[RMDB]
RNA sequence: GGGAACGACUCGAGUAGAGUCGAAAAGUGAGGGGUUUUAUAUUCCAAAACUCAGCAAAGAGAGGUUGGUUGCCAUCUUAGAAUGGGAGAGAAGUGAUGAGCUGUUUAGAACGAGAAGUGCCUCGAAUCGCAUCUACGAAUUCGUUCGUAGAUGCGAAAAAGAAACAACAACAACAAC
Reactivity to DMS in 0.01 (KOAc 150mM, MgCl2 10mM, bicine 150mM(pH8.5), 24C), signal-to-noise 1, nucleotides 027 to 126: g010u020g010a270g030g000g000g000u000u010u010u010a050u000a170u020u000c050c030a020a070a030a040c050u000c020a080g000c090a050a050a120g000a090g010a090g000g030u000u000g000g020u000u000g000c010c020a050u000c090u000u010a130g000a060a030u000g000g010g030a090g000a020g000a050a030g010u000g020a060u010g010a080g000c040u010g030u000u010u000a130g010a080a080c090g000a050g030a050a170g000u010g010c030c020u000c060g020a080a100

Source: RMDB library OK2TST, as collected in RNAgym. Structure probing data (DMS) for a 177-nucleotide construct. The reactions ran in a buffer of 150 mM KOAc, 10 mM MgCl2 and 150 mM bicine (pH 8.5), at 24 C.